RNA sequence: GGGAACGACUCGAGUAGAGUCGAAAAGAUAUGGAUGUAGCUUUUGACGCUCCUGUAUCGGAAACGAUAUCUAAGGAGCGAUAAGCUAGAUCCUAAGUCAAAACUCCGCAUCUUCGGAUGCGGAGAAGAUCGAAUUCUACUUCGGUAGAAUUCGAUCAAAAGAAACAACAACAACAAC
Reactivity to 2A3 in 0.01 (KOAc 150mM, MgCl2 10mM, bicine 150mM(pH8.5), 24C), signal-to-noise 2, nucleotides 027 to 126: g030a040u030a040u110g020g000a030u070g130u280a000g010c020u130u040u150u190g260a170c070g010c010u000c000c010u000g010u000a010u020c000g000g000a050a020a000c000g000a000u000a030u040c180u190a160a100g000g000a020g030c000g030a010u020a010a010g000c000u000a000g040a040u000c000c000u010a070a000g050u080c040a010a000a140a230c020u000c020c000g000c000a000u000c000u050u040c300g160g020a000u020g010c060g000g000a010g010a000a000
Reactivity to DMS in 0.01 (KOAc 150mM, MgCl2 10mM, bicine 150mM(pH8.5), 24C), signal-to-noise 1, nucleotides 027 to 126: g000a060u000a300u000g000g000a010u000g000u000a010g000c000u000u000u000u000g030a180c100g020c000u010c000c010u000g020u000a000u000c000g000g050a120a120a180c000g000a010u000a000u000c140u020a180a060g000g010a000g040c010g010a010u010a000a000g020c030u000a000g000a010u010c010c000u000a060a100g000u010c020a060a110a090a100c020u000c010c000g000c000a010u000c000u010u010c210g020g030a030u010g010c000g000g000a010g000a000a030
Overview: An RNA of 177 nucleotides, treated with 2A3 and DMS and read out base by base. For 2A3, 2,188 sequencing reads were counted. As a SHAPE reagent, 2A3 marks flexible, mostly unpaired nucleotides at the ribose 2'-OH. Reactivities are given for positions 27 through 126. It was measured as part of the RMDB library TTRDEL. Conditions: 150 mM KOAc, 10 mM MgCl2 and 150 mM bicine (pH 8.5), 24 C.